The record gives the reactivity of an RNA of 177 nucleotides to 2A3.
Conditions: 150 mM KOAc, 10 mM MgCl2 and 150 mM bicine (pH 8.5), 24 C.
2A3 is a SHAPE reagent: it acylates the 2'-hydroxyl of flexible nucleotides of all four kinds.
RNA sequence: GGGAACGACUCGAGUAGAGUCGAAAAAGCUAGGUCCCCAAUUGAGCAGAUACUCCCAGCCGAGGGUGGUGGCCGAUGGGGAUGCGGCUCCAUUGGCCUUGCGGUAGAUACCGCUCAGGUGAUUGGCCUCCUGCCAGGACUUCGGUCCUGGCAGGAGAAAAGAAACAACAACAACAAC
Reactivity to 2A3 in 0.01 (KOAc 150mM, MgCl2 10mM, bicine 150mM(pH8.5), 24C), signal-to-noise 1, nucleotides 027 to 126: a000g060c030u000a010g010g010u060c000c000c020c000a000a070u070u060g020a010g000c010a000g010a060u170a110c000u010c000c020c040a020g000c000c000g060a200g020g030g010u060g000g020u010g030g030c130c040g000a000u020g000g000g030g000a020u020g110c070g060g010c000u020c010c070a180u160u130g000g000c020c000u070u040g000c000g000g000u000a140g010a030u090a170c000c000g000c000u040c000a000g110g040u000g000a050u040u070g010g000c000